[RMDB]
RNA sequence: GGGAACGACUCGAGUAGAGUCGAAAAUUGCCCUAGUGGUUUCGGACACACCGCCAACGCUCAGUGCGGUGCUACCGACCCGAGGUCAAGUCCCGGGGGAGGAGAAGAGAGGCUUCCCGCCUAGAGCUCACCACGAGGUUUUCGAACCUCGUGGUGAAAAAGAAACAACAACAACAAC
Reactivity to 2A3 in 0.01 (KOAc 150mM, MgCl2 10mM, bicine 150mM(pH8.5), 24C), signal-to-noise 4, nucleotides 027 to 126: u020u020g040c000c000c000u070a100g030u300g090g000u070u190u150c000g010g110a090c000a000c000a000c140c000g010c010c010a110a060c090g150c130u160c120a030g020u100g160c000g000g000u000g010c010u090a020c020c000g000a000c010c000c010g010a020g020g000u000c010a000a050g020u030c000c000c000g000g000g000g000g010a100g030g020a050g020a180a030g080a020g000a000g050g040c000u010u000c010c010c010g020c010c020u050a030g000a020g080c000
Reactivity to DMS in 0.01 (KOAc 150mM, MgCl2 10mM, bicine 150mM(pH8.5), 24C), signal-to-noise 1, nucleotides 027 to 126: u000u000g000c000c000c000u000a000g000u000g000g000u060u070u110c000g000g000a170c300a300c000a000c000c000g000c010c040a060a120c230g010c110u050c300a180g020u000g060c000g000g000u000g000c180u000a270c020c000g000a000c220c000c020g010a040g000g020u010c000a020a020g020u000c000c000c000g050g000g000g000g000a030g010g000a000g000a110a150g030a030g020a060g000g040c000u000u000c000c000c010g000c040c000u000a060g000a100g000c020